[RMDB]
RNA sequence: GGGAACGACUCGAGUAGAGUCGAAAAGUCUCCUAGAGAGCUUGGCCGUCGGGCCUUACACCCCGACUUGCUGAGUUUCUCUAGGAGAGUCCCUUUCCCAGCCAGAGGUGGCUGGUCAACCAAUACCAAAACUCUUGCUAGUUCGCUAGCAAGAGAACACUCCAUUUAUGUUCGCAUAAAUGGAGUGAAAAGAAACAACAACAACAAC
Reactivity to DMS in 0.01 (KOAc 150mM, MgCl2 10mM, bicine 150mM(pH8.5), 24C), signal-to-noise 2, nucleotides 027 to 156: g000u000c010u000c000c030u000a060g000a010g010a070g010c000u000u000g030g020c000c300g000u000c040g010g010g030c040c080u010u010a140c180a220c300c000c000c020g000a010c010u000u030g030c010u000g010a030g020u010u000u000c000u000c000u010a040g000g000a020g010a030g020u000c010c000c010u010u020u010c070c000c010a000g050c030c020a060g000a210g000g040u000g010g000c040u000g000g020u010c020a040a060c000c000a090a170u000a210c100c040a100a060a120a220c000u000c010u010u000g000c000u010a020g010u000u000c300g010c000u010a030g030c000a000a010g010a010g040a040a140
Reactivity to 2A3 in 0.01 (KOAc 150mM, MgCl2 10mM, bicine 150mM(pH8.5), 24C), signal-to-noise 3, nucleotides 027 to 156: g000u000c000u000c000c000u000a000g000a000g000a000g010c010u010u010g000g000c000c020g010u000c000g000g020g000c000c010u050u130a090c080a030c000c000c000c000g000a000c010u070u280g010c000u010g000a000g010u050u300u010c000u000c000u010a000g000g000a000g000a000g000u000c000c000c000u020u090u010c010c000c000a000g010c000c000a030g010a080g160g090u050g020g000c000u020g010g010u070c010a030a050c040c060a070a040u090a120c020c020a030a040a120a160c000u000c000u000u000g000c000u000a000g030u070u030c240g030c120u000a000g010c000a000a000g000a000g000a010a000

Chemical mapping of a 207-nucleotide RNA with DMS and 2A3.
DMS adducts were read by reverse transcription with MarathonRT.
For DMS, 2,618 sequencing reads were counted.
Source: RMDB library M2RFPK, as collected in RNAgym.